[RMDB]
RNA sequence: GGGAACGACUCGAGUAGAGUCGAAAACCUACACUGACUGUAUAGAAAGAGGAAGGAGAAUAAAACUACCCUGUGUACACCUCAGCCUAGGCCACUGUGCCUGGUCUGUAUUGUGAAUGAGUAGACAUCCGAAUGAUUACUUCGGUAAUCAUUCGGAAAAAGAAACAACAACAACAAC
Reactivity to 2A3 in 0.01 (KOAc 150mM, MgCl2 10mM, bicine 150mM(pH8.5), 24C), signal-to-noise 4, nucleotides 027 to 126: c020c020u030a040c130a030c070u050g050a000c010u020g060u120a020u070a100g150a050a110a000g050a070g070g110a060a040g040g090a040g020a100a110u090a180a070a030a000c020u040a040c000c000c020u030g040u020g020u110a050c040a010c000c020u020c010a000g030c020c000u020a010g000g000c010c010a300c230u170g100u220g060c000c000u000g000g030u000c000u010g010u050a060u100u130g020u000g100a130a100u130g000a020g030u000a010g010a070c020a080
Reactivity to DMS in 0.01 (KOAc 150mM, MgCl2 10mM, bicine 150mM(pH8.5), 24C), signal-to-noise 3, nucleotides 027 to 126: c000c010u000a090c070a110c030u020g010a140c040u030g050u030a060u000a070g000a100a090a030g010a080g010g000a080a060g000g000a080g020a070a090u020a030a040a050a090c050u010a050c030c010c000u000g030u010g030u010a130c060a060c100c090u020c000a000g000c120c010u000a010g030g000c000c020a100c200u040g010u020g040c000c000u000g020g000u010c000u000g000u010a070u010u000g000u000g000a080a050u000g020a070g000u020a020g010a090c190a130

Notes: Source: RMDB libraries RFM100 and RFMREP, as collected in RNAgym. An RNA of 177 nucleotides, treated with 2A3 and DMS and read out base by base. Reactivities are rounded to 0.1 and cut off at 0 and 3.